Source: RMDB library OK1LIB, as collected in RNAgym.
Chemical mapping of a 177-nucleotide RNA with 2A3 and DMS.
DMS adducts were read by reverse transcription with MarathonRT.
The RNA was probed in 150 mM KOAc, 10 mM MgCl2 and 150 mM bicine (pH 8.5) at 24 C.
2A3 adducts were read by reverse transcription with SuperScript II with manganese.
The 2A3 profile rests on 9,510 reads.
The DMS profile rests on 6,992 reads.
RNA sequence: GGGAACGACUCGAGUAGAGUCGAAAAGUCACAGGAUUUCUGCCCAGAUCCUGAGGAUCUUGUGAUAGUAAGGCUCUGUAACAAAUCAUGAGAGCAAAACCACCUUGGUCACCUCCACUAGGCAGGAUAGUUUUAGGACUUUCGAGUCCUAAAACUAAAAAGAAACAACAACAACAAC
Reactivity to 2A3 in 0.01 (KOAc 150mM, MgCl2 10mM, bicine 150mM(pH8.5), 24C), signal-to-noise 9, nucleotides 027 to 126: g030u020c010a000c010a050g020g010a020u030u120u050c030u080g050c010c010c000a040g020a090u050c010c020u040g020a070g060g020a010u000c000u030u030g010u030g030a060u050a080g130u080a100a090g080g000c010u010c010u040g130u150a140a080c090a100a130a090u160c070a110u180g070a020g020a000g030c010a030a040a040a020c020c020a020c010c020u030u050g020g000u040c020a030c030c010u020c000c000a030c060u030a030g010g010c020a020g000g070a060
Reactivity to DMS in 0.01 (KOAc 150mM, MgCl2 10mM, bicine 150mM(pH8.5), 24C), signal-to-noise 4, nucleotides 027 to 126: g010u020c040a030c010a000g000g010a040u000u010u010c050u030g020c030c030c040a080g000a070u000c020c030u020g010a160g040g010a080u020c020u000u000g020u020g010a060u000a060g000u020a110a170g000g040c010u010c020u010g020u040a090a100c190a080a100a080u010c090a080u010g010a050g000a050g010c050a050a030a100a130c090c030a050c040c050u000u000g010g000u000c030a080c030c030u020c040c060a030c100u020a050g010g000c020a040g010g000a160